[RMDB]
RNA sequence: GGGAACGACUCGAGUAGAGUCGAAAAGAUCUGAAAAUCAGGGAUCCGUGGCUACGGGUCGUGAGGGAGUUUACUUCUAUUCCCAAUGGGGAAGCGAACCAGCCGGUUGAGGAAGUGUCGGGAAUUGCAAUCGCAUCGAGUUCGCUCGAUGCGAUUGAAAAGAAACAACAACAACAAC
Reactivity to 2A3 in 0.01 (KOAc 150mM, MgCl2 10mM, bicine 150mM(pH8.5), 24C), signal-to-noise 1, nucleotides 027 to 126: g040a000u080c060u100g100a040a010a000a160u210c070a090g020g010g020a000u060c010c010g030u040g010g070c000u060a000c110g000g000g100u000c030g060u010g040a030g010g060g000a000g010u040u100u030a090c000u020u080c020u070a180u000u060c030c000c000a000a210u180g050g000g000g030a020a020g000c000g090a000a090c010c000a000g000c000c000g060g000u130u150g000a010g000g120a040a040g010u000g040u140c040g010g000g050a080a200u050u160g200
Reactivity to DMS in 0.01 (KOAc 150mM, MgCl2 10mM, bicine 150mM(pH8.5), 24C), signal-to-noise 2, nucleotides 027 to 126: g000a070u020c050u080g010a050a020a160a100u010c150a120g000g010g000a000u020c020c050g010u010g000g090c160u010a110c110g000g020g010u000c000g010u020g000a070g000g000g000a030g000u000u070u030a000c060u000u000c060u020a090u030u000c010c010c000a090a090u030g000g000g010g000a000a050g000c060g000a140a040c040c030a100g010c010c050g000g000u000u020g030a130g000g050a020a160g010u010g000u010c030g050g000g010a140a080u000u000g010